[RMDB]
RNA sequence: GGGAACGACUCGAGUAGAGUCGAAAACUUCCUUUUUUGUGGCUCAUAAUAAUCAGAAUUUGACUUCCGAGCAGAUUAAUUAAACAACACACGGGGAAUUUCAGGAUGGAAGAAAAGGAGGAGGAGGGAACGUCGUACUUUUCGAAGUACGACGUUCAAAAGAAACAACAACAACAAC
Reactivity to 2A3 in 0.01 (KOAc 150mM, MgCl2 10mM, bicine 150mM(pH8.5), 24C), signal-to-noise 3, nucleotides 027 to 126: c010u040u020c010c000u050u020u000u000u040u180g200u080g060g000c010u000c110a100u080a260a090u100a080a010u120c060a040g120a160a050u160u050u100g110a150c050u100u000c020c010g000a010g020c000a010g050a020u000u000a090a100u050u130a020a090a090c080a090a030c060a000c000a020c060g020g020g010g100a010a040u110u110u100c010a010g010g030a020u060g060g070a070a000g020a020a050a000a030g010g030a010g020g020a000g050g030a000g040g050
Reactivity to DMS in 0.01 (KOAc 150mM, MgCl2 10mM, bicine 150mM(pH8.5), 24C), signal-to-noise 2, nucleotides 027 to 126: c160u010u000c000c000u000u000u030u000u000u000g040u000g000g000c030u080c120a110u020a160a050u020a110a060u000c100a120g010a020a050u020u000u020g000a090c060u030u010c050c080g050a040g020c050a000g020a050u000u000a170a060u030u020a030a080a010c160a120a050c240a050c140a040c080g040g000g000g000a120a070u000u000u070c120a070g010g060a140u020g000g000a080a040g010a010a000a090a040g050g000a040g000g000a110g000g000a080g000g000